Structure probing data (DMS and 2A3) for a 177-nucleotide construct. The 2A3 profile rests on 3,923 reads. The reactions ran in a buffer of 150 mM KOAc, 10 mM MgCl2 and 150 mM bicine (pH 8.5), at 24 C. Source: RMDB library TTRDES, as collected in RNAgym.
RNA sequence: GGGAACGACUCGAGUAGAGUCGAAAAGAUAUGGACCGACCUCGGGCGACGAUAAGCAGCAUUCGGAAACGAAUGGCUGCUUUUGACGUCGCAUCGGUCCUAAGUCAAAGCCUGGUUCGCCAGGCAAUCAUGAGACACAGUUCGCUGUGUCUCAUGAAAAAGAAACAACAACAACAAC
Reactivity to DMS in 0.01 (KOAc 150mM, MgCl2 10mM, bicine 150mM(pH8.5), 24C), signal-to-noise 3, nucleotides 027 to 126: g000a060u000a300u010g000g000a010c010c010g040a070c300c210u010c180g010g010g020c000g000a010c000g040a180u010a020a020g000c000a010g000c000a040u000u000c000g020g000a100a060a130c010g000a010a000u000g010g020c000u000g010c000u000u000u010u010g010a200c050g030u000c000g010c010a090u000c000g000g000u010c000c010u000a010a110g010u020c060a090a120a200g000c010c000u000g040g000u000u010c270g030c000c000a020g010g000c000a000a010
Reactivity to 2A3 in 0.01 (KOAc 150mM, MgCl2 10mM, bicine 150mM(pH8.5), 24C), signal-to-noise 2, nucleotides 027 to 126: g010a010u050a040u130g000g000a030c010c020g000a060c070c180u230c300g180g170g050c010g020a000c010g080a100u060a260a000g010c020a000g000c000a020u000u040c000g040g060a050a060a090c020g000a000a010u050g120g070c000u000g000c000u000u010u000u000g010a020c030g000u010c010g040c010a010u020c000g000g000u030c000c000u010a130a010g030u040c080a160a030a030g000c010c010u000g010g010u100u040c200g040c060c000a000g000g000c020a000a020